[RMDB]
RNA sequence: GGGAACGACUCGAGUAGAGUCGAAAAGCUCUGGAUACGAUCGCGCACAAACUGGGGCCACAUGCUAAACGGAAAAUAUAAUCUCAGUUAUUAAAGUCCCUGUAUUUCGCAAGUGAGAGACUCGUGCUAUCACUCACAUGGCAUUAUCCGCGAUGCAGCCCAGUAUCCUGUUCGCAGGAUACUGGGCAAAAGAAACAACAACAACAAC
Reactivity to 2A3 in 0.01 (KOAc 150mM, MgCl2 10mM, bicine 150mM(pH8.5), 24C), signal-to-noise 1, nucleotides 027 to 156: g020c000u010c000u000g010g010a040u060a120c100g060a140u000c040g000c010g100c070a030c020a060a100a040c070u000g010g000g040g060c000c030a140c020a020u180g100c060u080a050a010a040c070g080g040a090a000a000a130u260a020u000a130a130u040c020u000c030a060g040u040u090a020u080u130a040a120a010g000u000c030c000c040u000g110u070a160u050u100u120c040g000c020a070a110g000u000g000a010g000a000g050a060c000u000c130g000u000g050c000u050a050u250c030a030c030u030c000a060c010a110u100g130g020c010a020u060u000a060u150c020c030g090c020g030a030u190g020c060a010
Source: RMDB library OK3TST, as collected in RNAgym. This 207-nucleotide RNA was probed chemically with 2A3. For 2A3, 433 sequencing reads were counted. For 2A3 the reverse transcriptase was SuperScript II with manganese.